[RMDB]
RNA sequence: GGGAACGACUCGAGUAGAGUCGAAAAGGCGUAGCCGACAACAUGCCCUGGUAGCCCAGACCUUCAAGGCUACGGUGCGUUGCGACGCACGGUCUGAUUCUUCACAACGACGUUCACCGCGUCUUCUACAACCGGCAAAGAUUCGUCUUUGCCGGAACUCGAACUAAUUCUUCGGAAUUAGUUCGAGAAAAGAAACAACAACAACAAC
Reactivity to 2A3 in 0.01 (KOAc 150mM, MgCl2 10mM, bicine 150mM(pH8.5), 24C), signal-to-noise 3, nucleotides 027 to 156: g040g000c080g090u070a040g020c030c020g120a050c070a140a030c020a090u150g030c000c000c010u010g110g030u090a030g010c060c010c010a030g010a070c020c010u120u110c070a040a020g020g020c000u010a000c010g020g010u010g010c000g010u050u070g020c120g130a010c010g000c000a000c020g000g000u010c000u010g010a090u100u080c100u150u190c120a060c010a250a100c120g020a000c010g080u190u210c090a060c160c030g010c000g050u000c050u060u010c030u150a160c060a100a080c000c000g010g000c000a010a000a020g010a020u060u120c130g050u000c100u010u000u000g000c000c000g000g000a000a010
An RNA of 207 nucleotides, treated with 2A3 and read out base by base. Values cover nucleotides 27 to 156. The RNA was probed in 150 mM KOAc, 10 mM MgCl2 and 150 mM bicine (pH 8.5) at 24 C. For 2A3, 1,691 sequencing reads were counted.